Source information
The record gives the reactivity of an RNA of 207 nucleotides to DMS and 2A3. 2A3 is a SHAPE reagent: it acylates the 2'-hydroxyl of flexible nucleotides of all four kinds. DMS adducts were read by reverse transcription with MarathonRT.
RNA sequence: GGGAACGACUCGAGUAGAGUCGAAAAUUAGAUCUGGCUGCUCAGCCAGCUGCGGAACCUGCUUCCUGCGAGUGGAGGAAGGAGUUAUCCCAAGUGUGACUGAUGAAGUUAUGCAGAGGGGAGUGCUUAGCAAGCACCCUUCCACAGGCAAAGGCCACCAUACCGUUAGAUUCGUCUAACGGUAUGGAAAAGAAACAACAACAACAAC
Reactivity to DMS in 0.01 (KOAc 150mM, MgCl2 10mM, bicine 150mM(pH8.5), 24C), signal-to-noise 2, nucleotides 027 to 156: u010u000a110g010a140u010c030u000g000g020c000u000g010c060u010c130a080g020c040c020a080g000c040u000g000c060g060g000a080a160c100c030u000g000c020u010u010c030c010u000g030c080g010a200g040u020g000g000a090g020g010a030a070g010g010a130g010u000u010a090u000c000c000c000a100a200g040u010g000u000g000a030c000u000g030a170u010g010a210a030g000u000u000a030u000g010c020a130g030a280g020g020g000g000a050g020u000g000c010u000u000a220g020c210a300a180g000c020a030c000c020c000u000u000c000c010a100c000a050g000g000c070a040a080a130g010g010c030c020a110
Reactivity to 2A3 in 0.01 (KOAc 150mM, MgCl2 10mM, bicine 150mM(pH8.5), 24C), signal-to-noise 6, nucleotides 027 to 156: u150u070a060g070a120u050c020u020g010g000c010u060g050c070u110c170a010g000c000c000a000g000c010u060g030c060g020g000a040a070c000c010u050g040c030u060u020c010c020u050g080c070g080a070g070u120g030g060a090g010g010a000a010g020g040a020g000u040u080a080u130c000c000c010a040a080g020u020g020u020g030a010c010u000g010a030u150g030a130a000g030u040u050a020u050g010c020a020g020a080g110g040g000g000a060g020u010g000c010u060u080a060g060c080a040a000g000c000a000c010c000c000u020u020c020c010a050c030a060g020g000c010a070a100a050g080g010c000c020a020